Structure probing data (2A3 and DMS) for a 177-nucleotide construct. Conditions: 150 mM KOAc, 10 mM MgCl2 and 150 mM bicine (pH 8.5), 24 C. For DMS the reverse transcriptase was MarathonRT. Source: RMDB library OK1LIB, as collected in RNAgym. Reactivities are given for positions 27 through 126.

RNA sequence: GGGAACGACUCGAGUAGAGUCGAAAAGAGGUGAUAGCUCGAUGCGUAGGCGGUCGCUUCGAGCUGAUGAACUGUUUGCGUAGAACCGCCAAAAUACGCAUAUAGAUAAUCGAAUGAUCGCUUCGAAGGGUAAUGUUAUCUUCGGAUAACAUUACCCAAAAGAAACAACAACAACAAC
Reactivity to 2A3 in 0.01 (KOAc 150mM, MgCl2 10mM, bicine 150mM(pH8.5), 24C), signal-to-noise 4, nucleotides 027 to 126: g020a010g000g020u010g000a010u030a030g020c000u000c010g000a010u020g010c010g010u020a130g090g050c040g010g060u120c020g000c000u020u020c000g000a000g000c020u020g010a030u040g000a030a040c000u020g000u040u040u010g000c000g000u020a010g040a120a060c020c020g000c060c030a010a080a000a000u030a000c000g000c010a020u080a000u040a070g100a090u190a110a010u060c030g060a120a110u180g040a030u040c020g000c000u040u030c000g070a110a150
Reactivity to DMS in 0.01 (KOAc 150mM, MgCl2 10mM, bicine 150mM(pH8.5), 24C), signal-to-noise 2, nucleotides 027 to 126: g020a030g000g030u000g000a040u000a050g000c000u030c000g000a020u000g010c000g010u000a070g000g050c120g010g010u010c000g000c000u040u000c000g020a000g000c000u020g000a040u020g000a130a190c030u000g010u000u000u010g000c030g010u010a000g000a160a170c050c080g030c020c020a060a040a070a110u010a020c000g000c000a000u010a040u000a020g000a030u000a170a140u010c000g000a120a110u030g000a000u020c000g000c000u000u010c000g010a140a140